About this RNA
This 177-nucleotide RNA was probed chemically with DMS and 2A3. The DMS profile rests on 1,666 reads. DMS adducts were read by reverse transcription with MarathonRT. The data come from the RNA Mapping Database (RMDB), library OK1LIB.
RNA sequence: GGGAACGACUCGAGUAGAGUCGAAAAGUUUUACCGCCUAUUGAUUGCCAUGAAAAUGCGAUUUUCCUCGCAGGAAGCUUAAUGGCAGCCAUUUUGAGUGGCUCAGUAUUUUCGGGGCGCGGCAGAAGGUACGGUACCUAUUCGUAGGUACCGUACCAAAAGAAACAACAACAACAAC
Reactivity to DMS in 0.01 (KOAc 150mM, MgCl2 10mM, bicine 150mM(pH8.5), 24C), signal-to-noise 2, nucleotides 027 to 126: g000u000u000u010u000a100c000c010g030c040c010u020a300u030u040g020a010u010u060g000c030c000a040u010g000a060a010a100a080u030g000c000g000a100u020u010u030u020c110c120u000c070g020c050a100g000g000a100a140g000c110u000u000a000a050u010g050g060c060a040g020c000c030a010u020u000u030u080g000a230g000u030g020g000c010u000c090a070g050u000a020u000u000u060u000c030g000g000g000g000c000g000c000g000g070c050a070g000a160a110
Reactivity to 2A3 in 0.01 (KOAc 150mM, MgCl2 10mM, bicine 150mM(pH8.5), 24C), signal-to-noise 3, nucleotides 027 to 126: g030u000u030u080u240a100c000c010g000c000c010u130a200u050u220g110a120u010u240g040c010c040a030u030g010a020a000a010a070u010g000c000g000a000u070u000u110u130c010c020u050c050g000c010a020g030g010a060a040g030c050u090u150a080a020u200g000g000c000a000g040c000c000a040u060u140u140u300g210a160g000u010g000g000c000u050c040a050g010u080a100u010u060u000u070c000g000g000g020g000c010g040c010g060g000c050a060g070a180a080